[RMDB]
RNA sequence: GGGAACGACUCGAGUAGAGUCGAAAAAUGCGGGGACUGACAUCGGAACAAAUUUUCUCUGAAAUCGAAGUUGCAAUUCCCCGAUGUAUCGAAGCUUUGCACCGGUGUUAAAGACGUGUAUCCGUGAUCAUAGGCUGGGUUUCGACCCAGCCUAUGAAAAAGAAACAACAACAACAAC
Reactivity to 2A3 in 0.01 (KOAc 150mM, MgCl2 10mM, bicine 150mM(pH8.5), 24C), signal-to-noise 1, nucleotides 027 to 126: a000u180g000c010g000g000g000g000a000c020u050g000a010c000a000u000c000g000g000a060a040c000a070a040a040u120u010u020u000c140u000c010u050g040a090a000a000u050c000g130a140a030g070u150u080g010c030a060a090u000u040c000c000c000c000g000a000u040g050u130a150u040c060g020a020a020g000c030u000u000u000g000c050a060c040c000g000g000u050g020u020u020a030a020a010g070a000c070g000u000g050u010a060u030c000c000g030u040g070a050
Reactivity to DMS in 0.01 (KOAc 150mM, MgCl2 10mM, bicine 150mM(pH8.5), 24C), signal-to-noise 2, nucleotides 027 to 126: a080u020g010c030g030g000g000g000a210c160u000g000a050c040a070u000c020g020g000a150a170c060a010a000a040u010u000u010u000c000u030c080u010g000a080a120a050u000c080g010a130a140g000u000u020g030c120a060a110u000u000c010c000c000c090g010a010u000g010u080a080u010c080g000a040a040g000c060u000u000u010g000c300a050c000c010g000g010u000g000u000u000a060a050a080g010a060c110g010u000g000u000a030u000c010c010g010u010g000a170
Chemical mapping of a 177-nucleotide RNA with 2A3 and DMS. Reactivities are given for positions 27 through 126. For DMS, 2,905 sequencing reads were counted. 2A3 adducts were read by reverse transcription with SuperScript II with manganese.